[RMDB]
RNA sequence: GGGAACGACUCGAGUAGAGUCGAAAAGGGCGAUGUUAUUUGGCAUGAAUGCGGCUGGCCUCACCCCACAAUGAGCCGACUUGAUAUAGCUUAUUAUCUUUCGGUUGGCGAUAUGCACGAGGUGGAAAGAUAGCACUUUUUGCUAAAACGCCGAUGGGUACGUGCUAAUAUUCGUAUUAGCACGUACAAAAGAAACAACAACAACAAC
Reactivity to 2A3 in 0.01 (KOAc 150mM, MgCl2 10mM, bicine 150mM(pH8.5), 24C), signal-to-noise 3, nucleotides 027 to 156: g060g000g000c050g040a080u060g050u240u090a160u150u110u070g010g060c020a020u080g040a100a040u090g040c110g060g000c050u050g030g020c000c000u040c030a050c010c000c030c000a030c020a050a140u140g010a000g010c000c020g020a020c070u040u150g000a000u030a010u030a050g080c040u190u030a050u080u020a010u150c040u000u070u040c020g030g000u050u040g000g010c010g040a050u020a040u250g030c040a010c110g020a020g060g000u020g000g020a040a040a090g200a110u180a070g020c000a030c020u030u040u020u050u050g000c000u000a000a060a000a040c000g020c010c010g050a100u090g100g000
Reactivity to DMS in 0.01 (KOAc 150mM, MgCl2 10mM, bicine 150mM(pH8.5), 24C), signal-to-noise 2, nucleotides 027 to 156: g040g030g010c020g010a100u000g030u010u000a090u000u000u010g000g000c020a090u010g000a080a060u010g020c040g020g000c030u000g000g060c040c060u010c040a090c040c000c000c010a090c060a080a110u020g010a290g010c020c000g030a050c060u000u000g010a090u000a070u000a100g020c160u000u020a140u000u000a040u000c040u000u010u010c030g000g020u000u000g010g030c010g020a130u010a090u000g000c080a090c050g000a050g010g030u000g000g000a110a110a120g000a200u000a060g030c020a030c100u000u000u000u000u010g000c020u030a050a040a110a120c030g010c000c010g000a040u000g020g000